[RMDB]
RNA sequence: GGGAACGACUCGAGUAGAGUCGAAAACCGUAGGAAUAUCGGGCCAGCUGGAGCAUAUCAAAGUACCUGUUCGAAAGAGCAGGUAAUGAAGUAUGCGUUGAAAGCUGGUCUCUAGCGUGUAUUCCUAAACGGAAACCUGCAUGUUCGCAUGCAGGAACGCCGAGUAAACGUUCGCGUUUACUCGGCGAAAAGAAACAACAACAACAAC
Reactivity to 2A3 in 0.01 (KOAc 150mM, MgCl2 10mM, bicine 150mM(pH8.5), 24C), signal-to-noise 1, nucleotides 027 to 156: c000c000g020u010a000g000g010a000a030u000a010u060c000g000g010g010c020c000a000g010c000u030g020g000a040g110c020a020u010a010u130c080a190a050a020g010u010a010c000c010u010g000u040u000c010g030a080a070a060g010a020g000c020a000g000g000u000a000a000u020g000a050a020g030u000a000u000g000c000g130u160u020g000a020a050a000g010c000u000g000g010u000c000u000c000u000a020g050c070g030u180g000u090a000u000u000c000c000u020a110a040a040c030g030g000a060a090a000c000c010u000g000c000a000u000g040u100u130c250g000c140a000u000g000c000a000g020g010a010a020

The record gives the reactivity of an RNA of 207 nucleotides to 2A3. For 2A3, 1,414 sequencing reads were counted. 2A3 is a SHAPE reagent: it acylates the 2'-hydroxyl of flexible nucleotides of all four kinds. Source: RMDB library RNAMAK, as collected in RNAgym.